[RMDB]
RNA sequence: GGGAACGACUCGAGUAGAGUCGAAAAGUCAAUACCACCCGCAGUUACGAUCAAACCUUCACCGGCUAAGGCUUCAGUAGCAGGACCCACGCAAAGAUUAUUUUUAACGCCAUCUUGCAUGUCUUUGCAUUAUCUAGCUGUUCGCAGCUAGAUAAUGAAAAGAAACAACAACAACAAC
Reactivity to 2A3 in 0.01 (KOAc 150mM, MgCl2 10mM, bicine 150mM(pH8.5), 24C), signal-to-noise 9, nucleotides 027 to 126: g030u020c020a030a060u060a160c030c020a030c000c010c010g000c030a060g040u090u120a060c080g020a060u060c070a060a050a050c010c000u040u050c040a030c040c030g030g010c030u050a070a040g060g000c010u060u040c030a060g030u090a020g030c020a020g020g030a030c000c020c000a040c050g030c020a050a060a020g030a030u060u060a120u060u230u060u100u130a080a030c050g010c030c000a040u040c040u030u070g020c030a050u100g030u050c010u000u020u020g000
Reactivity to DMS in 0.01 (KOAc 150mM, MgCl2 10mM, bicine 150mM(pH8.5), 24C), signal-to-noise 6, nucleotides 027 to 126: g020u010c070a080a110u020a110c040c040a090c020c020c010g000c060a060g000u000u010a080c100g000a050u000c080a080a090a080c050c020u000u000c050a070c050c060g010g010c040u010a060a080g000g000c050u000u010c060a080g030u010a050g020c060a080g000g000a110c030c010c040a070c110g010c030a030a040a030g000a060u000u020a050u020u000u010u010u010a040a120c100g000c030c080a060u020c070u000u010g000c030a060u010g010u010c000u010u000u000g020
Structure probing data (2A3 and DMS) for a 177-nucleotide construct. For DMS the reverse transcriptase was MarathonRT. The data come from the RNA Mapping Database (RMDB), libraries RFM100 and RFMREP.